[RMDB]
The record gives the reactivity of an RNA of 177 nucleotides to DMS and 2A3. It was measured as part of the RMDB library RFM100. DMS (dimethyl sulfate) methylates the pairing face of unpaired adenines and cytosines. For 2A3, 1,536 sequencing reads were counted. The RNA was probed in 150 mM KOAc, 10 mM MgCl2 and 150 mM bicine (pH 8.5) at 24 C. Reactivities are given for positions 27 through 126. For DMS, 1,484 sequencing reads were counted. Values are in units of 0.01, from 0 to 300, in steps of 10.

RNA sequence: GGGAACGACUCGAGUAGAGUCGAAAACUUGAUUACACUCUCUCAUUCAUGGUCACUUCCGAAGCGCUUUAGUGCCUUCCGUCCCUAAACCGCCAACAGCCAGAACGGCUUCUCCCCGCGGUUUGUCCAAGUUAGAGGGCUUCGGCCCUCUAACUUGAAAAGAAACAACAACAACAAC
Reactivity to DMS in 0.01 (KOAc 150mM, MgCl2 10mM, bicine 150mM(pH8.5), 24C), signal-to-noise 2, nucleotides 027 to 126: c010u000u000g000a130u060u010a070c240a040c030u020c000u040c000u020c000a080u000u000c090a120u020g000g080u000c060a050c060u000u000c030c030g030a050a020g000c100g000c020u060u000u060a040g050u030g010c000c000u000u020c000c020g000u000c010c030c000u000a060a070a060c030c000g040c000c140a080a100c070a000g000c000c020a140g030a120a270c220g020g000c020u000u000c030u000c040c000c000c080g030c030g010g010u000u010u050g000u050c110
Reactivity to 2A3 in 0.01 (KOAc 150mM, MgCl2 10mM, bicine 150mM(pH8.5), 24C), signal-to-noise 3, nucleotides 027 to 126: c000u040u120g030a030u190u220a060c030a020c020u000c000u000c040u020c020a050u110u020c030a040u120g040g000u020c020a030c050u040u020c030c010g030a030a000g020c020g040c020u050u090u090a060g070u150g070c000c020u020u000c000c020g010u000c020c000c000u030a080a060a010c010c020g010c020c010a020a030c030a120g000c000c010a040g040a300a090c050g030g000c000u030u000c010u060c010c010c020c000g020c030g050g000u010u010u040g020u000c020